[RMDB]
RNA sequence: GGGAACGACUCGAGUAGAGUCGAAAAGACGCUGAUGCGAUCGACUGUAAGAUAGAUACACUGAGGAGACAGAUACGUACGGCAAGUAUCGUCGCCAGAAAUACAGUCGCAAAUUGCCGUACGAAGACGGAUGGUAGUCAUUCGUGACUACCAUCCGAAAAGAAACAACAACAACAAC
Reactivity to 2A3 in 0.01 (KOAc 150mM, MgCl2 10mM, bicine 150mM(pH8.5), 24C), signal-to-noise 4, nucleotides 027 to 126: g110a000c020g040c030u180g080a120u270g010c070g050a060u020c000g000a000c010u000g070u060a090a050g060a210u130a040g070a010u150a140c070a060c140u090g030a040g080g070a070g040a030c020a090g050a060u110a100c000g020u000a000c000g000g000c020a030a080g000u020a000u000c020g000u000c000g050c040c000a010g130a040a030a020u030a000c000a000g000u000c000g000c040a000a110a040u020u010g000c000c000g000u000a010c020g070a100a020g060a020
Reactivity to DMS in 0.01 (KOAc 150mM, MgCl2 10mM, bicine 150mM(pH8.5), 24C), signal-to-noise 2, nucleotides 027 to 126: g000a000c020g000c000u000g000a160u020g030c040g000a170u010c010g040a080c000u020g000u000a020a060g000a070u000a120g010a150u020a060c150a130c090u000g000a220g070g060a140g000a010c080a170g000a070u030a010c040g030u010a030c000g000g020c040a000a000g000u000a010u020c000g000u000c050g000c120c030a040g000a070a200a130u010a010c000a020g010u000c000g000c250a060a060a050u030u000g010c000c000g000u000a000c160g000a080a120g000a210